[RMDB]
Chemical mapping of a 177-nucleotide RNA with DMS. DMS (dimethyl sulfate) methylates the pairing face of unpaired adenines and cytosines.
RNA sequence: GGGAACGACUCGAGUAGAGUCGAAAACUACGUUCGUUCGCGAACGUAGAAAGAAGCCUGAGGCAAAGAGCCAAGAAUGGGACAGACAGGCAAGAGCCAAAAAAAGAAGCCACUUCGGUGGCUUCAAUCUUGGUAAAGGGUUCGCCCUUUACCAAGAAAAAGAAACAACAACAACAAC
Reactivity to DMS in 0.01 (KOAc 150mM, MgCl2 10mM, bicine 150mM(pH8.5), 24C), signal-to-noise 1, nucleotides 027 to 126: c000u000a010c000g000u000u000c020g040u000u000c200g020c010g010a030a010c000g000u000a020g000a090a040a110g000a280a120g020c000c000u070g030a160g000g030c020a020a130a100g010a230g000c000c020a030a100g000a180a070u000g010g010g030a030c110a070g000a130c040a110g000g000c010a050a130g010a090g040c010c030a000a000a030a160a050a140a160g010a090a020g000c010c000a000c000u000u020c150g030g000u000g000g040c000u010u020c020a030a080